An RNA of 207 nucleotides, treated with DMS and 2A3 and read out base by base. Reactivities are rounded to 0.1 and cut off at 0 and 3. Conditions: 150 mM KOAc, 10 mM MgCl2 and 150 mM bicine (pH 8.5), 24 C.
[RMDB]
RNA sequence: GGGAACGACUCGAGUAGAGUCGAAAAUGCACUCCAGUCUGGGUGACAAAGCAAGACUCCAUCUCAAAUAAAUAAAUAAGAUAAAGCAACAUAGGCAUUCAGCUGUAGUUCACUGACUCUGGAGUAUGAGCCGUGGUGUAGAGUGUUAAUGCUGCCAUGGCAUAUUACUAUUCGUAGUAAUAUGCCAAAAAGAAACAACAACAACAAC
Reactivity to DMS in 0.01 (KOAc 150mM, MgCl2 10mM, bicine 150mM(pH8.5), 24C), signal-to-noise 2, nucleotides 027 to 156: u000g060c030a050c000u000c010c000a120g010u000c050u000g020g000g040u000g030a080c050a070a080a170g020c050a120a130g000a090c000u000c010c000a050u000c010u000c000a060a090a160u000a040a090a140u000a050a080a160u000a050a120g010a070u000a050a100a110g020c040a040a060c040a130u000a090g000g030c020a090u010u000c080a140g000c010u000g000u000a080g010u000u000c030a050c040u000g010a090c040u010c040u000g000g020a130g020u010a100u010g010a010g030c000c030g000u000g000g020u020g010u000a080g010a130g040u000g020u000u000a040a120u000g020c030u000g020c010c050a200
Reactivity to 2A3 in 0.01 (KOAc 150mM, MgCl2 10mM, bicine 150mM(pH8.5), 24C), signal-to-noise 2, nucleotides 027 to 156: u070g010c030a020c000u000c000c000a010g090u050c040u050g050g000g000u030g020a070c030a040a100a020g040c050a090a010g080a040c010u030c020c020a040u010c020u040c060a070a080a190u210a050a060a030u170a070a070a040u200a050a030g030a030u180a110a160a030g050c000a010a060c030a070u220a070g000g060c010a020u060u020c050a050g010c020u020g000u080a020g020u020u070c010a020c040u030g090a050c010u060c040u050g020g040a060g020u040a090u080g010a010g030c000c010g020u000g000g040u050g000u040a040g010a040g070u060g030u050u100a030a070u070g020c030u020g080c010c070a040